[RMDB]
RNA sequence: GGGAACGACUCGAGUAGAGUCGAAAAUUGAGGUAUUACAAAAAUUGGCACAUCAAUAUCCGGCAUAUGGCUUUGGUCUUAUGUUCAAUAAGUUACGGCAGUCUGGAUUACCGUGGAAUGUAAAACGCGUCCUCAAAUAGUUCGCUAUUUGAGGACGAAAAGAAACAACAACAACAAC
Reactivity to DMS in 0.01 (KOAc 150mM, MgCl2 10mM, bicine 150mM(pH8.5), 24C), signal-to-noise 2, nucleotides 027 to 126: u010u000g020a060g020g020u000a030u000u000a100c100a070a120a060a110a090u010u010g000g020c070a020c060a060u020c060a030a040u000a120u000c050c010g050g020c050a070u030a110u000g030g000c010u000u000u030g010g020u000c030u010u000a030u000g000u000u000c160a080a050u000a020a050g000u010u000a040c070g010g000c030a060g010u010c030u010g000g010a070u010u000a060c070c040g030u010g000g010a120a100u010g010u010a050a020a090a140c190g010
Reactivity to 2A3 in 0.01 (KOAc 150mM, MgCl2 10mM, bicine 150mM(pH8.5), 24C), signal-to-noise 1, nucleotides 027 to 126: u030u070g030a040g000g040u090a030u170u090a080c050a050a080a080a050a150u090u110g070g010c050a010c010a110u050c000a020a120u000a060u180c020c020g020g000c050a010u080a100u210g100g000c040u120u000u150g090g030u020c020u010u070a000u060g020u190u090c050a070a060u070a170a000g010u030u090a030c020g050g020c010a000g040u060c060u060g060g020a030u040u050a060c010c030g030u020g010g040a170a120u070g000u090a140a050a000a000c070g000
Chemical mapping of a 177-nucleotide RNA with DMS and 2A3. For DMS, 1,769 sequencing reads were counted. The data come from the RNA Mapping Database (RMDB), library OK2TRN. The reactions ran in a buffer of 150 mM KOAc, 10 mM MgCl2 and 150 mM bicine (pH 8.5), at 24 C. For 2A3, 1,294 sequencing reads were counted. For DMS the reverse transcriptase was MarathonRT.